[RMDB]
RNA sequence: GGGAACGACUCGAGUAGAGUCGAAAAUGCAGAAAGGUAUAUUGAAGUCCUAAUCUCCAGUACCUCAGACAGUGACCAUAUGUGAAAACAGUGUUGUUGCAGAUGUAAUUAAUUGAGAUGAGGUCAUAGUAGAGGAGGGUGGGAACCUACUCCACUAGACGUUUUAUUUAUUCGUAAAUAAAACGUCAAAAGAAACAACAACAACAAC
Reactivity to DMS in 0.01 (KOAc 150mM, MgCl2 10mM, bicine 150mM(pH8.5), 24C), signal-to-noise 3, nucleotides 027 to 156: u010g010c010a040g020a030a250a020g020g010u010a070u000a110u000u000g010a060a060g010u000c050c040u000a080a090u000c010u020c010c040a090g010u000a080c020c010u000c020a140g020a140c050a080g000u010g020a060c040c030a090u000a080u010g040u010g020a070a040a090a070c050a150g030u000g000u000u000g010u000u010g010c000a030g000a100u000g000u000a050a070u010u000a050a120u010u000g000a140g010a100u000g000a050g000g030u000c050a080u010a060g040u000a030g010a050g020g000a120g000g010g010u010g010g010g000a080a050c010c010u010a040c030u000c000c030a080c050u000a180
Reactivity to 2A3 in 0.01 (KOAc 150mM, MgCl2 10mM, bicine 150mM(pH8.5), 24C), signal-to-noise 3, nucleotides 027 to 156: u180g000c010a000g010a050a030a010g040g070u050a080u030a030u270u150g030a010a010g020u030c000c020u090a090a080u040c050u040c060c020a030g040u030a030c010c000u020c000a030g040a160c000a020g030u010g020a020c000c030a030u080a090u190g040u010g060a070a060a000a030c040a070g040u000g000u090u020g000u010u010g010c030a030g000a120u020g050u060a030a060u080u080a040a070u160u120g050a060g000a080u060g010a020g000g020u020c000a020u050a040g050u020a010g020a010g020g030a010g000g000g000u020g000g030g000a000a000c000c000u020a010c010u070c060c070a010c040u030a040
Notes:
Conditions: 150 mM KOAc, 10 mM MgCl2 and 150 mM bicine (pH 8.5), 24 C. Structure probing data (DMS and 2A3) for a 207-nucleotide construct. 2A3 is a SHAPE reagent: it acylates the 2'-hydroxyl of flexible nucleotides of all four kinds. The DMS profile rests on 5,441 reads. Reactivities are rounded to 0.1 and cut off at 0 and 3. Source: RMDB library OK3TST, as collected in RNAgym. The 2A3 profile rests on 2,027 reads.